[RMDB]
Overview:
Chemical mapping of a 170-nucleotide RNA with DMS and 2A3. For DMS, 64,178 sequencing reads were counted. The RNA was probed in 150 mM KOAc, 10 mM MgCl2 and 150 mM bicine (pH 8.5) at 24 C. It was measured as part of the RMDB library 15KLIB.
RNA sequence: GGGAACGACUCGAGUAGAGUCGAAAAAGGAUCGGUAGAAAAGAGCGAGACCUCCGAUUCGAGAGCUCCUGGACUCCUCAGCUCUGGAGUCCUCCGACCCGUGAGGUCGAGGAUCCCCGCGCAGGGACGACCCCUCAGUUCGCUGAGGGGAAAAGAAACAACAACAACAAC
Reactivity to DMS in 0.01 (KOAc 150mM, MgCl2 10mM, bicine 150mM(pH8.5), 24C), signal-to-noise 9, nucleotides 027 to 129: a070g040g010a050u030c060g000g050u040a040g000a060a080a100a100g040a030g010c090g000a040g000a150c070c010u000c020c040g020a070u010u020c060g000a060g020a100g020c070u000c020c020u000g000g020a090c080u010c000c000u020c060a150g020c070u000c040u050g000g000a050g030u020c000c000u000c050c050g030a020c020c020c020g010u060g040a110g000g000u000c020g010a030g000g000a070u010c020c020c010c010g030c160g040c080a180g000g000g000a040c090g010a180
Reactivity to 2A3 in 0.01 (KOAc 150mM, MgCl2 10mM, bicine 150mM(pH8.5), 24C), signal-to-noise 9, nucleotides 027 to 129: a030g020g000a010u020c030g010g060u220a030g090a060a100a050a010g100a040g060c080g030a040g060a090c010c010u000c010c010g020a010u010u030c040g000a030g010a010g090c020u020c030c020u050g020g030a030c010u020c000c000u050c060a050g020c040u030c060u080g000g010a010g020u020c000c000u020c020c030g010a010c000c000c030g160u220g080a200g000g000u010c010g000a020g010g010a070u050c010c010c010c000g060c020g000c070a050g010g000g010a010c020g070a040